[RMDB]
RNA sequence: GGGAACGACUCGAGUAGAGUCGAAAAAGACUGCUGGACUCGCCGCCCGAGCCCGAGCCUGAGCCAAGUUCCGAGCGAGGAGACGCGGGGGAAGGAUCAGCUCCCGAGAGGGGAUGUCACGGUAAAGAGCAUUGGAACGUCGGAGAAACUACUCCCAGGUAUGUUUACACUUCGGUGUAAACAUACCAAAAGAAACAACAACAACAAC
Reactivity to 2A3 in 0.01 (KOAc 150mM, MgCl2 10mM, bicine 150mM(pH8.5), 24C), signal-to-noise 1, nucleotides 027 to 156: a000g060a050c040u060g020c010u040g010g000a050c010u020c070g090c120c050g050c000c000c000g030a010g040c000c000c020g050a050g040c000c050u090g080a080g000c050c050a080a020g030u100u000c030c010g070a030g030c030g000a040g040g000a090g010a060c140g010c010g050g020g000g000g040a020a050g000g000a060u030c020a010g060c000u000c000c010c040g050a130g000a020g040g030g050g010a040u090g040u070c030a010c120g050g000u060a130a100a000g040a000g000c020a100u030u080g050g030a030a030c030g050u020c100g090g000a010g060a030a140a010c040u100a010c000u010c000c000c020a020
Record summary: Structure probing data (2A3) for a 207-nucleotide construct. Source: RMDB library VIROID, as collected in RNAgym. For 2A3 the reverse transcriptase was SuperScript II with manganese. Values cover nucleotides 27 to 156. For 2A3, 714 sequencing reads were counted.